[RMDB]
RNA sequence: GGGAACGACUCGAGUAGAGUCGAAAAAAUUACAUGAUUCGUGUGUAUGUAUAUAUGCAGUCAGUCCUCUGCAUCUGUGCAUUCAAACAACUGUGGAUCAAAAGUAUCUGCGGGAGGAGGAUGGGGGAACUGGGACAUUAUUCGUAAUGUCCCAGUUAAAAGAAACAACAACAACAAC
Reactivity to 2A3 in 0.01 (KOAc 150mM, MgCl2 10mM, bicine 150mM(pH8.5), 24C), signal-to-noise 1, nucleotides 027 to 126: a010a000u190u080a030c060a040u070g040a100u040u100c090g030u070g010u020g000u070a000u010g000u000a010u010a000u010a000u030g000c000a010g040u080c030a040g120u020c020c040u060c020u020g010c000a010u000c010u010g010u000g010c010a020u040u050c010a000a100a110c020a080a060c110u090g080u140g040g000a000u040c050a030a150a170a000g060u050a010u050c040u060g060c020g040g030g010a050g060g020a040g050g010a060u060g020g030g010g040g010
Reactivity to DMS in 0.01 (KOAc 150mM, MgCl2 10mM, bicine 150mM(pH8.5), 24C), signal-to-noise 3, nucleotides 027 to 126: a060a040u020u000a100c060a100u010g000a060u000u020c060g010u000g030u000g000u000a030u000g020u010a020u000a010u000a020u010g000c010a000g010u000c100a100g000u010c140c100u000c010u010g000c010a010u000c060u010g030u010g020c010a010u010u010c040a030a070a060c060a060a080c160u020g020u000g010g010a020u010c050a060a090a120a170g010u010a010u010c090u000g000c070g000g000g010a090g000g000a160g010g000a090u010g000g000g000g000g000
An RNA of 177 nucleotides, treated with 2A3 and DMS and read out base by base. Reactivities are given for positions 27 through 126. Source: RMDB library OK2TST, as collected in RNAgym.